Description: Structure probing data (DMS and 2A3) for a 207-nucleotide construct. The RNA was probed in 150 mM KOAc, 10 mM MgCl2 and 150 mM bicine (pH 8.5) at 24 C. DMS adducts were read by reverse transcription with MarathonRT. 2A3 adducts were read by reverse transcription with SuperScript II with manganese. For 2A3, 1,099 sequencing reads were counted. The data come from the RNA Mapping Database (RMDB), library M2RFPK.
[RMDB]
RNA sequence: GGGAACGACUCGAGUAGAGUCGAAAAGUAGUUAUGCUGAAAAUCAUUGAGGUUGUAUGGAAUAGGUUAACCGUAAGACCUUAAGUUGAAAAACUUUAAAAUUAAUCUCAGGUAAAUUACUUUGAGUAAAACCUUCGUCGUUUCGACGACGAAGGAAUCAAAACUAUUGAUUCGUCAAUAGUUUUGAAAAAGAAACAACAACAACAAC
Reactivity to DMS in 0.01 (KOAc 150mM, MgCl2 10mM, bicine 150mM(pH8.5), 24C), signal-to-noise 1, nucleotides 027 to 156: g000u000a050g020u000u010a050u000g000c020u050g030a070a080a070a090u020c060a300u010u000g000a060g000g000u000u000g000u000a040u000g000g020a060a280u010a100g010g000u010u000a100a300c020c010g010u000a050a120g000a030c010c010u000u000a010a000g040u000u000g010a230a070a180a050a030c040u010u010u000a030a080a070a080u000u000a070a130u000c020u000c040a100g050g000u010a040a040a070u010u000a010c000u000u000u000g000a110g040u000a050a030a140a140c000c000u010u000c000g000u010c000g010u000u000u000c270g040a080c000g010a010c000g000a020a010g000g010a000a030
Reactivity to 2A3 in 0.01 (KOAc 150mM, MgCl2 10mM, bicine 150mM(pH8.5), 24C), signal-to-noise 2, nucleotides 027 to 156: g010u040a000g010u000u100a130u240g080c020u050g050a010a080a050a140u120c080a090u040u090g000a010g000g020u050u050g010u060a060u040g020g030a170a080u080a240g100g060u150u120a060a010c000c000g010u010a120a000g000a000c000c000u000u020a030a010g000u020u070g040a100a080a000a000a040c020u120u200u200a120a100a040a040u080u080a110a130u010c010u000c030a000g020g040u070a100a100a100u040u020a010c000u070u120u100g030a050g030u100a010a060a060a090c010c000u010u000c000g000u000c000g000u000u060u110c220g070a000c010g000a000c000g000a000a000g000g010a000a010